[RMDB]
RNA sequence: GGGAACGACUCGAGUAGAGUCGAAAACGUCAUUUCACAGGUCAAAGUUUAAGUGAAGGCUAUUGGAAUCUGCGGAUUAGACAUUCACUACUACACGGAUGGCCAGGUCAGCGUAAAGUAACCUGGGUCUAGCAACUUCAUUCGUGAAGUUGCUAGAAAAAGAAACAACAACAACAAC
Reactivity to 2A3 in 0.01 (KOAc 150mM, MgCl2 10mM, bicine 150mM(pH8.5), 24C), signal-to-noise 2, nucleotides 027 to 126: c020g010u010c030a050u010u030u080c020a010c000a050g100g000u040c010a050a020a060g030u050u080u110a220a090g060u090g230a120a080g010g000c020u110a180u150u050g130g030a040a060u010c020u070g070c020g010g060a050u030u020a070g020a020c010a020u040u060c030a010c080u110a060c000u030a020c070a020c040g040g070a040u030g050g080c050c010a000g050g000u050c040a080g030c050g050u120a080a140a100g020u010a000a010c000c020u000g000g030g000
Reactivity to DMS in 0.01 (KOAc 150mM, MgCl2 10mM, bicine 150mM(pH8.5), 24C), signal-to-noise 2, nucleotides 027 to 126: c170g010u000c030a080u010u000u000c030a030c030a060g010g000u000c030a080a060a050g010u000u000u000a080a090g040u010g010a130a080g000g000c030u010a100u000u000g020g010a110a020u000c030u000g030c050g010g000a060u000u000a130g010a090c050a090u010u000c040a040c050u000a110c070u000a050c100a120c030g020g000a100u000g010g010c010c010a020g000g000u010c100a070g020c050g020u010a050a070a160g010u000a080a040c000c010u010g000g000g010
Structure probing data (2A3 and DMS) for a 177-nucleotide construct. For DMS the reverse transcriptase was MarathonRT. The 2A3 profile rests on 1,522 reads. For DMS, 1,949 sequencing reads were counted. It was measured as part of the RMDB library OK2TST. For 2A3 the reverse transcriptase was SuperScript II with manganese.